[RMDB]
RNA sequence: GGGAACGACUCGAGUAGAGUCGAAAAACUGCUCGAGGAUCUCUUCUCUCCCUCCGCGGUUCUUCCUCGACUCGGACCGGCUCAUCUCGGCUAGAGGCGGCAGUCCUCAGUACUCUUACUCUUUUCUGUAAAGAGGAGACUGCUGGACUCGCCGCCCCACCUUCCUACAGUUCGCUGUAGGAAGGUGAAAAGAAACAACAACAACAAC
Reactivity to 2A3 in 0.01 (KOAc 150mM, MgCl2 10mM, bicine 150mM(pH8.5), 24C), signal-to-noise 4, nucleotides 027 to 156: a000c000u010g000c010u040c120g010a010g030g010a170u060c130u050c080u300u090c110u060c040u050c000c020c010u000c030c030g010c010g020g000u040u020c020u060u060c020c020u030c000g020a020c000u010c020g000g140a040c020c000g030g020c040u020c040a130u030c030u000c020g090g040c110u100a030g010a130g140g000c000g000g020c010a000g010u000c000c000u000c000a020g020u130a300c030u000c030u060u150a280c020u030c030u080u200u090u080c170u280g260u300a010a010a000g000a010g000g010a000g010a000c000u010g090c100u020g000g010a020c000u010c050g000c000c000g000c000c000c000